[RMDB]
RNA sequence: GGGAACGACUCGAGUAGAGUCGAAAAGAUAUGGACCCUUGUAGGGAGCUGUCAUGUCGGAAACGACAUGGCAGCGACGAUCUACACGAGGGUCCUAAGUCAAAACACAGGGUCUUCGGACCCUGUGCUUUUUUUAUUGGUUCGCCAAUAAAAAAAGAAAAGAAACAACAACAACAAC
Reactivity to DMS in 0.01 (KOAc 150mM, MgCl2 10mM, bicine 150mM(pH8.5), 24C), signal-to-noise 3, nucleotides 027 to 126: g000a020u000a060u010g010g000a020c000c000c010u000u000g020u000a010g000g010g010a030g040c000u000g000u000c000a000u000g010u000c000g030g010a020a030a050c000g020a010c000a000u010g000g000c000a000g000c000g000a030c280g000a010u010c000u000a010c010a110c250g000a030g010g030g010u000c000c000u000a010a070g000u000c010a130a090a100a220c010a010c000a000g010g010g000u000c000u000u020c270g020g020a010c000c000c000u000g010u000g000
Reactivity to 2A3 in 0.01 (KOAc 150mM, MgCl2 10mM, bicine 150mM(pH8.5), 24C), signal-to-noise 1, nucleotides 027 to 126: g000a020u030a020u060g020g000a000c030c000c000u010u130g030u000a010g000g000g050a060g020c010u020g010u030c000a000u020g000u000c000g000g000a000a010a010c010g000a000c000a010u020g010g000c000a010g000c000g000a010c020g000a000u030c010u000a020c040a040c070g080a220g000g010g000u020c000c000u000a000a010g000u000c010a050a020a170a040c020a010c000a010g010g050g000u000c000u140u210c300g120g010a020c000c010c010u010g000u000g010